[RMDB]
RNA sequence: GGGAACGACUCGAGUAGAGUCGAAAACAAUUGCUGUGCCCUGGGCACCUUAUUGCCUGUCAAACAUGGCCAUCAAUGAUAAGAGGCACCCAUUGCUCAUGCUUGAAGUUGCAUGUUUGAGUUGAGGACACGUACCGCUGUUCGCAGCGGUACGUGUAAAAGAAACAACAACAACAAC
Reactivity to DMS in 0.01 (KOAc 150mM, MgCl2 10mM, bicine 150mM(pH8.5), 24C), signal-to-noise 1, nucleotides 027 to 126: c070a200a110u010u000g010c120u010g010u000g030c010c010c060u000g030g010g000c010a040c120c150u000u010a060u000u000g000c000c000u010g030u000c050a050a020a120c060a040u020g000g030c060c030a120u010c060a020a080u000g000a140u000a070a060g000a120g000g020c030a040c100c040c050a080u000u010g010c030u020c000a150u000g000c000u000u010g000a140a090g000u010u000g030c030a050u000g010u000u000u010g000a090g030u010u000g020a170g000g000